[RMDB]
RNA sequence: GGGAACGACUCGAGUAGAGUCGAAAAGUUCACGUGAGAACACACACACUCUCGAGAACACUCUCGAGAACUCUCUCUCUCACUCACUCGUUCGAACGAGAUCUCACGUGUGUGUUCGAGAGUACACGUGUACACUCGAGUUCGAGUUCGAACACUCACCCAGCAACAAGUUCGCUUGUUGCUGGGUAAAAGAAACAACAACAACAAC
Reactivity to 2A3 in 0.01 (KOAc 150mM, MgCl2 10mM, bicine 150mM(pH8.5), 24C), signal-to-noise 1, nucleotides 027 to 156: g030u010u030c000a000c000g000u000g020a140g000a000a000c000a000c000a000c000a000c000a040c030u020c000u000c020g020a000g010a160a030c080a050c210u040c000u000c000g020a000g050a020a020c070u050c000u000c000u000c000u000c000u000c240a040c060u210c010a080c050u160c080g060u150u080c020g090a080a020c030g010a000g030a100u030c050u060c130a130c170g000u000g000u000g000u000g040u020u030c020g000a000g000a030g060u050a050c000a000c010g010u000g000u030a000c050a010c030u000c030g050a030g040u050u070c010g010a020g000u100u120c040g040a070a010c010a030c040u040c020
The record gives the reactivity of an RNA of 207 nucleotides to 2A3. It was measured as part of the RMDB library OK3TST.